RNA sequence: GGGAACGACUCGAGUAGAGUCGAAAAGAUAUGGAUAUGUAAACCUAUGCGUAGCGUUGAAAUCGGAAACGAUGGAGCUACCAUAGGCGAAUACAUAUCCUAAGUCAAAGUCGAGUUCGCUCGACAAGUGAUCUUAGCAGUUCGCUGCUAAGAUCACAAAAGAAACAACAACAACAAC
Reactivity to DMS in 0.01 (KOAc 150mM, MgCl2 10mM, bicine 150mM(pH8.5), 24C), signal-to-noise 2, nucleotides 027 to 126: g000a030u000a300u000g000g000a000u000a000u000g000u010a010a170a150c000c000u000a010u000g020c290g030u000a000g020c010g000u000u020g000a040a140a030u000c000g000g020a090a140a140c010g000a050u000g020g000a100g030c000u000a000c000c000a000u000a010g010g060c010g010a110a180u000a040c010a010u000a000u000c000c000u000a020a060g000u000c000a120a130a110g010u020c000g000a020g010u020u000c250g000c010u000c000g000a000c000a060a030
Reactivity to 2A3 in 0.01 (KOAc 150mM, MgCl2 10mM, bicine 150mM(pH8.5), 24C), signal-to-noise 2, nucleotides 027 to 126: g030a000u070a020u190g010g010a000u000a010u000g020u040a030a220a050c010c010u030a020u030g140c220g070u000a000g000c020g170u300u070g020a020a020a010u030c010g030g090a080a020a050c010g010a010u010g000g010a000g000c000u000a000c000c000a010u000a000g000g010c010g000a070a040u030a010c000a000u000a000u000c010c010u010a100a050g010u020c060a110a000a040g000u000c000g010a010g000u000u180c230g070c100u020c010g000a020c000a030a000